[RMDB]
RNA sequence: GGGAACGACUCGAGUAGAGUCGAAAAAAGAAGGGGAUAAUGCACUUUUUGUGCCAUGCAUCCAGAGGAAUUAUGUGUGCUAAUUUGAUUAGGGGAGAUUUGAUUAACUGGAAAAUGAGGGCUUUGCUAAGACUUUCACACGCUUAAUUUAUCCCUAGUCCGUAAUAUGAUUCGUCAUAUUACGGACAAAAGAAACAACAACAACAAC
Reactivity to DMS in 0.01 (KOAc 150mM, MgCl2 10mM, bicine 150mM(pH8.5), 24C), signal-to-noise 2, nucleotides 027 to 156: a080a060g000a160a090g000g010g020g030a100u010a060a110u000g000c020a020c040u000u000u010u000u000g020u000g010c000c060a070u000g020c040a060u000c040c000a160g010a100g030g010a090a080u010u010a060u000g020u000g020u030g000c030u010a040a120u000u000u000g010a150u000u000a070g040g020g010g010a090g010a100u000u010u000g000a120u000u000a060a070c050u000g000g010a060a080a070a050u000g010a080g020g010g030c060u010u010u000g030c060u010a050a140g000a080c040u010u000u000c030a040c060a050c080g010c040u000u010a050a060u000u010u010a140u010c010c010c000u000a160
Reactivity to 2A3 in 0.01 (KOAc 150mM, MgCl2 10mM, bicine 150mM(pH8.5), 24C), signal-to-noise 5, nucleotides 027 to 156: a010a000g110a050a040g040g020g000g010a010u060a070a040u110g010c010a020c020u050u100u120u170u300g020u010g010c030c000a020u050g000c010a020u020c050c040a020g010a030g060g050a040a060u150u040a060u110g060u020g010u020g030c040u060a080a110u110u100u190g060a060u050u130a020g020g020g030g000a060g030a080u110u060u040g030a050u100u080a080a020c040u040g020g010a060a030a030a100u050g020a070g020g030g000c010u090u040u030g010c000u050a060a030g010a090c010u070u110u050c060a030c000a010c060g020c020u060u040a050a040u140u090u120a060u030c000c000c000u010a030
Description
An RNA of 207 nucleotides, treated with DMS and 2A3 and read out base by base. For DMS the reverse transcriptase was MarathonRT. For DMS, 4,384 sequencing reads were counted. The RNA was probed in 150 mM KOAc, 10 mM MgCl2 and 150 mM bicine (pH 8.5) at 24 C.